[RMDB]
RNA sequence: GGGAACGACUCGAGUAGAGUCGAAAAACAAAUGGCGCCCAGAGAGCUAAUGCCAGAGGAAAUGUUUGGAUUAACCUUUCCUUUAAAUUCUUAAUGUUUAAAAGCACCUUUUCACGGAGUUCUUACCUUAUUCCUUGUAUCUGGGAGAGCAAUGCGGACCAAAAGACCUAUUCGUAGGUCUUUUGGUAAAAGAAACAACAACAACAAC
Reactivity to DMS in 0.01 (KOAc 150mM, MgCl2 10mM, bicine 150mM(pH8.5), 24C), signal-to-noise 1, nucleotides 027 to 156: a070c040a060a090a100u010g020g010c000g000c010c010c040a100g010a120g000a140g000c080u000a050a110u000g050c070c070a050g010a080g010g000a030a030a050u000g000u000u000u010g000g020a140u010u000a020a030c010c030u000u000u010c010c020u000u000u020a080a080a120u000u010c050u020u010a070a080u010g000u000u000u010a020a050a050a060g000c050a060c050c020u000u000u000u000c030a080c080g060g040a090g020u000u010c050u010u000a100c070c030u010u010a050u000u000c020c050u000u000g010u000a060u000c040u000g020g000g000a130g010a070g060c030a060a090u010g010c040g010g010
Reactivity to 2A3 in 0.01 (KOAc 150mM, MgCl2 10mM, bicine 150mM(pH8.5), 24C), signal-to-noise 2, nucleotides 027 to 156: a000c040a020a090a070u080g020g010c020g010c000c050c050a050g000a000g000a000g040c100u180a210a040u250g020c010c010a040g020a030g050g040a050a080a020u060g000u020u070u080g150g010a050u100u140a010a020c010c000u000u000u000c000c000u040u080u020a040a110a040u080u100c050u070u140a140a100u140g040u070u080u080a020a100a010a050g000c000a100c000c000u030u050u120u090c040a060c150g040g000a000g060u110u020c070u130u190a140c030c000u050u140a080u120u080c000c000u100u060g020u050a060u040c000u050g010g040g000a020g070a000g050c010a000a000u200g090c030g070g050